This 207-nucleotide RNA was probed chemically with 2A3 and DMS. For 2A3 the reverse transcriptase was SuperScript II with manganese. The 2A3 profile rests on 3,819 reads. The RNA was probed in 150 mM KOAc, 10 mM MgCl2 and 150 mM bicine (pH 8.5) at 24 C. DMS adducts were read by reverse transcription with MarathonRT.
[RMDB]
RNA sequence: GGGAACGACUCGAGUAGAGUCGAAAAGGACUCCGUGAGGAGUCCGUGCAGCGAGAGCUGCACAAGGCCUAAGUGUCACUCGGUGGCCCUCCUCUACGAUGUUGAGUAGAGGAGAGUAGUCGUCUCACGAUUUAUAGUGAGACUGACGUGAGUGAGAAUCAUUGAACUCAUUCGUGAGUUCAAUGAUAAAAGAAACAACAACAACAAC
Reactivity to 2A3 in 0.01 (KOAc 150mM, MgCl2 10mM, bicine 150mM(pH8.5), 24C), signal-to-noise 4, nucleotides 027 to 156: g000g000a000c010u000c020c000g040u060g050a040g010g000a010g000u010c000c000g000u000g000c000a000g000c010g040a070g010a000g050c010u010g020c010a000c010a000a020g020g000c010c000u100a160a120g040u040g050u080c000a000c000u010c010g060g140u120g070g000c010c000c000u010c000c000u000c000u010a010c010g120a130u140g040u140u060g060a030g000u000a000g000a000g010g000a000g000a000g000u010a030g000u000c000g000u000c010u000c010a000c000g010a010u000u300u130a210u260a080g000u000g000a010g000a020c020u040g010a000c020g020u040g000a000g000u010g000a010g020a000
Reactivity to DMS in 0.01 (KOAc 150mM, MgCl2 10mM, bicine 150mM(pH8.5), 24C), signal-to-noise 2, nucleotides 027 to 156: g050g000a010c000u000c010c020g000u030g000a300g030g000a030g000u000c000c030g030u000g010c000a030g040c010g010a300g010a300g020c000u010g000c010a000c000a060a120g000g030c000c010u010a090a240g020u000g010u000c020a000c000u000c000g040g000u000g020g000c000c000c000u010c030c010u000c010u010a000c010g000a190u000g030u000u010g010a270g000u000a010g000a020g030g010a000g000a010g030u000a070g010u000c030g010u000c000u010c000a000c010g000a250u000u010u040a130u000a130g020u000g000a030g010a030c000u000g050a100c020g040u010g000a030g010u000g000a060g000a160